[RMDB]
RNA sequence: GGGAACGACUCGAGUAGAGUCGAAAAGAUAUGGACGAGGUAGAGGCUCGAGGAUCUGUCCUCGGAAACGAGGACAGGGAGAGCAUUACUCGUCCUAAGUCAAAAGUAAAGGCUUCGGCCUUUACAACGUAAAGUUUUUGUUCGCAAAAACUUUACGAAAAGAAACAACAACAACAAC
Reactivity to 2A3 in 0.01 (KOAc 150mM, MgCl2 10mM, bicine 150mM(pH8.5), 24C), signal-to-noise 2, nucleotides 027 to 126: g000a000u000a000u030g000g000a000c010g010a000g030g110u240a130g080a250g300g060c010u010c040g080a300g040g020a010u000c000u000g000u020c010c010u000c000g000g000a000a000a000c000g000a010g000g000a000c000a000g000g010g000a020g000a000g000c010a000u020u250a100c000u000c010g010u000c010c000u000a010a000g000u000c000a050a140a000a090g010u020a000a000a000g000g000c030u090u190c300g160g010c040c080u000u010u010a000c010a020a010
Reactivity to DMS in 0.01 (KOAc 150mM, MgCl2 10mM, bicine 150mM(pH8.5), 24C), signal-to-noise 2, nucleotides 027 to 126: g000a010u000a050u010g000g010a010c000g010a010g010g010u010a180g020a230g020g010c000u000c000g000a070g040g000a020u010c010u000g000u000c000c000u000c000g000g000a000a000a020c000g020a020g000g010a020c000a000g000g000g000a000g010a040g020c000a090u010u020a090c000u000c000g010u000c000c000u000a000a070g000u000c010a100a090a130a170g010u000a000a010a020g000g010c000u000u000c290g000g010c000c000u000u000u010a010c000a120a200

This 177-nucleotide RNA was probed chemically with 2A3 and DMS. It was measured as part of the RMDB library TTRDES. Reactivities are given for positions 27 through 126. The reactions ran in a buffer of 150 mM KOAc, 10 mM MgCl2 and 150 mM bicine (pH 8.5), at 24 C.